The record gives the reactivity of an RNA of 177 nucleotides to 2A3 and DMS. For DMS, 3,428 sequencing reads were counted. The data come from the RNA Mapping Database (RMDB), library M2PK90. High DMS reactivity at an A or C suggests that its Watson-Crick edge is free. The reactions ran in a buffer of 150 mM KOAc, 10 mM MgCl2 and 150 mM bicine (pH 8.5), at 24 C. For 2A3, 2,858 sequencing reads were counted.

RNA sequence: GGGAACGACUCGAGUAGAGUCGAAAAAUAAAGCGUAAUCGCAUCCCAGUAGCAAAGAGCAGCGUAAAGGCGAAAGCCGAACUCAAGAUCGCAUCGGGCUAUGAUGCGAUCGUAGCCACGCAAAAAACAAUGCCAUGUAGUUCGCUACAUGGCAUUGAAAAGAAACAACAACAACAAC
Reactivity to 2A3 in 0.01 (KOAc 150mM, MgCl2 10mM, bicine 150mM(pH8.5), 24C), signal-to-noise 2, nucleotides 027 to 126: a000u100a000a110a050g020c030g040u050a110a090u230c050g010c000a020u030c000c000c000a030g100u130a020g040c030a040a230a040g040a070g020c120a010g010c010g070u090a040a070a090g000g020c000g050a050a010a000g000c000c000g000a050a010c030u060c050a020a060g000a010u010c020g000c000a000u020c010g030g060g020c040u100a100u300g000a000u000g000c000g000a010u000c000g000u000a000g020c050c010a000c030g000c000a000a100a000a030a000a060
Reactivity to DMS in 0.01 (KOAc 150mM, MgCl2 10mM, bicine 150mM(pH8.5), 24C), signal-to-noise 4, nucleotides 027 to 126: a100u000a070a090a110g000c010g030u030a160a140u020c030g010c000a130u000c000c000c000a190g020u000a060g000c080a050a070a100g010a050g010c070a060g000c090g010u000a060a100a160g000g010c000g000a080a060a170g030c010c010g000a060a080c060u000c070a060a120g010a010u000c010g010c010a000u000c000g000g010g010c210u010a110u010g000a000u000g000c000g010a000u000c000g000u010a040g010c130c080a050c070g040c070a010a030a030a090a030a080